[RMDB]
RNA sequence: GGGAACGACUCGAGUAGAGUCGAAAAGUGACUUCGGUCACCCGCACUCCUAAGUCUGCUGGGAGGAGAAGUACAGCGAUGAGCUCAUCGGAAACGAUGAGCGAGCUGUACGACUCCUUUGAUCAGCAGAUAUGGACUCCACUUCCUUCGGGAAGAAAAAACUCUUUUAUUUCGAUAAAAGAGUUUUAAAAGAAACAACAACAACAAC
Reactivity to DMS in 0.01 (KOAc 150mM, MgCl2 10mM, bicine 150mM(pH8.5), 24C), signal-to-noise 2, nucleotides 027 to 156: g000u020g000a060c000u010u000c250g060g020u010c000a040c010c030c110g000c100a170c140u000c010c030u010a070a300g010u000c010u000g020c000u000g000g000g000a060g010g020a020g000a030a300g030u000a040c010a000g010c000g020a210u000g030a220g030c000u000c010a000u000c020g020g000a170a160a250c000g000a020u010g020a010g020c000g000a010g000c030u000g000u000a000c000g030a300c020u000c010c000u010u000u020g010a110u020c010a010g000c010a010g000a010u000a110u010g000g000a050c060u030c030c040a150c030u000u000c000c010u000u020c260g060g010g020a040a070g020a020a090
Reactivity to 2A3 in 0.01 (KOAc 150mM, MgCl2 10mM, bicine 150mM(pH8.5), 24C), signal-to-noise 3, nucleotides 027 to 156: g030u010g000a010c020u070u150c300g070g000u010c010a020c020c010c030g200c040a110c050u050c000c010u010a140a050g030u000c000u000g000c000u010g000g020g000a010g020g010a010g000a010a010g000u000a000c010a000g000c030g230a300u180g110a050g000c000u000c000a010u000c000g050g020a100a070a070c010g000a010u000g010a000g000c000g000a010g000c000u010g000u000a000c000g000a000c000u000c000c000u080u160u050g060a050u070c000a000g000c000a000g000a000u010a000u010g000g000a030c040u060c080c030a070c020u030u020c000c000u020u100c220g090g000g030a010a020g000a120a050